Structure probing data (2A3 and DMS) for a 177-nucleotide construct. For 2A3, 912 sequencing reads were counted. For DMS, 1,114 sequencing reads were counted. The reactions ran in a buffer of 150 mM KOAc, 10 mM MgCl2 and 150 mM bicine (pH 8.5), at 24 C.
RNA sequence: GGGAACGACUCGAGUAGAGUCGAAAAAGUGGUGCAAUCAUAGUUCACUGUAACCUCCAGCUCCCGGGCUCAGGCAGUCCUCCCACUUCAGUCUCCUGAGUAGCUGGAACUGUAGGUGUGCACCGUCCAUGCGAUUCUGCUUCGGCAGAAUCGCAUGAAAAGAAACAACAACAACAAC
Reactivity to 2A3 in 0.01 (KOAc 150mM, MgCl2 10mM, bicine 150mM(pH8.5), 24C), signal-to-noise 2, nucleotides 027 to 126: a010g180u090g030g000u000g000c020a080a070u100c070a180u110a180g140u230u130c120a080c120u040g030u060a040a040c000c010u000c010c000a000g000c040u000c000c010c000g000g000g000c000u000c000a010g110g000c080a040g010u000c000c000u080c070c050c000a070c080u210u100c010a020g030u030c020u000c020c000u020g000a020g070u090a060g030c010u000g000g000a010a000c000u010g010u020a030g030g000u020g080u090g030c040a030c000c010g030u060c000
Reactivity to DMS in 0.01 (KOAc 150mM, MgCl2 10mM, bicine 150mM(pH8.5), 24C), signal-to-noise 1, nucleotides 027 to 126: a010g050u020g000g080u000g050c040a120a080u060c180a030u030a170g000u060u000c100a120c070u000g000u070a100a020c070c000u000c050c000a010g000c080u000c100c040c080g010g000g000c060u000c000a010g000g000c290a010g010u010c060c020u000c030c000c040a140c170u010u000c160a070g000u000c070u000c000c040u020g000a040g000u000a070g000c000u010g000g000a000a040c000u000g000u040a010g000g000u000g010u010g000c010a000c030c010g000u030c000